The data come from the RNA Mapping Database (RMDB), library TTRDEL. Structure probing data (2A3 and DMS) for a 177-nucleotide construct. The RNA was probed in 150 mM KOAc, 10 mM MgCl2 and 150 mM bicine (pH 8.5) at 24 C. For 2A3, 2,844 sequencing reads were counted. The DMS profile rests on 1,521 reads. For 2A3 the reverse transcriptase was SuperScript II with manganese.
RNA sequence: GGGAACGACUCGAGUAGAGUCGAAAAGAUAUGGACGAAGAACGUCGAACUACUCGGUCUGAUCGGAAACGAUCACCGAGCGACGGGAGUCCUAAGUCAAAGCAUCCCAUCUUCGGAUGGGAUGCAAUCUUUAGACUGACUUCGGUCAGUCUAAAGAAAAAGAAACAACAACAACAAC
Reactivity to 2A3 in 0.01 (KOAc 150mM, MgCl2 10mM, bicine 150mM(pH8.5), 24C), signal-to-noise 2, nucleotides 027 to 126: g050a040u110a130u170g000g000a010c000g080a110a140g040a200a040c010g010u010c010g000a040a090c090u210a030c040u260c030g010g060u160c220u120g010a000u000c000g020g030a070a050a030c010g000a000u020c000a000c000c000g000a000g000c000g000a010c020g000g000g000a030g020u000c000c010u010a180a000g040u030c050a170a030a020g030c010a020u000c010c000c000a010u020c000u010u050c260g150g000a000u000g010g020g000a000u000g000c010a000a000
Reactivity to DMS in 0.01 (KOAc 150mM, MgCl2 10mM, bicine 150mM(pH8.5), 24C), signal-to-noise 2, nucleotides 027 to 126: g010a100u000a300u000g020g000a030c000g010a190a080g050a120a170c010g020u000c010g000a100a050c080u030a280c000u000c010g010g000u010c130u010g040a000u000c000g000g000a120a040a160c000g010a010u010c000a060c010c000g010a020g030c000g000a000c000g020g000g040a150g000u000c000c010u000a020a110g000u000c030a070a080a190g010c000a010u010c000c000c020a000u000c000u000u010c180g030g000a000u000g010g000g000a000u000g010c000a000a000